Structure probing data (2A3 and DMS) for a 207-nucleotide construct.
2A3 adducts were read by reverse transcription with SuperScript II with manganese.
It was measured as part of the RMDB library OK3TST.
In probing experiments dimethyl sulfate is read out at A N1 and C N3, which are open when not base-paired.
The DMS profile rests on 9,655 reads.
Reactivities are given for positions 27 through 156.
[RMDB]
RNA sequence: GGGAACGACUCGAGUAGAGUCGAAAACGAGCAUGACCCCCGAGCAGCACGCCGCCAAGAUUCGUGAACUGGAAGCGCCUAUGGCUGCGGCCUAUCUGGCGGAAGUUCGUGCUGUCGAAUCUGCGGCAACCGUUGCUGAGGUUGAGCGGCUUAUUGCCUAUUUCCGUAGAUUCGUCUACGGAAAUAGAAAAGAAACAACAACAACAAC
Reactivity to 2A3 in 0.01 (KOAc 150mM, MgCl2 10mM, bicine 150mM(pH8.5), 24C), signal-to-noise 5, nucleotides 027 to 156: c040g030a010g010c050a110u140g060a190c000c010c000c020c070g020a010g030c010a010g010c020a000c040g010c010c000g000c020c060a120a030g010a010u050u040c020g050u130g060a050a020c020u070g060g100a140a040g140c010g030c010c040u120a120u100g010g000c020u020g000c050g060g000c000c000u080a100u150c120u040g000g000c010g000g050a020a000g040u060u070c020g010u090g080c120u080g040u030c000g000a000a020u010c000u020g010c000g020g000c000a030a030c040c030g030u030u030g000c010u030g020a060g060g000u060u100g050a030g040c020g050g020c050u120u110a100u160u270g020c010
Reactivity to DMS in 0.01 (KOAc 150mM, MgCl2 10mM, bicine 150mM(pH8.5), 24C), signal-to-noise 3, nucleotides 027 to 156: c040g000a080g020c030a110u010g000a180c020c010c000c020c030g020a120g000c000a050g000c000a090c050g020c020c010g000c000c040a110a050g010a090u000u000c020g020u000g010a060a100c050u000g010g020a180a170g030c020g050c040c020u000a140u010g010g010c000u010g060c180g080g000c010c000u000a090u000c110u010g010g010c000g020g000a080a060g010u000u000c010g030u000g000c110u000g010u000c050g010a050a040u000c020u000g000c020g010g010c000a060a050c040c040g030u000u000g010c010u010g010a110g020g010u000u000g000a140g020c040g010g000c030u000u000a070u000u000g000c080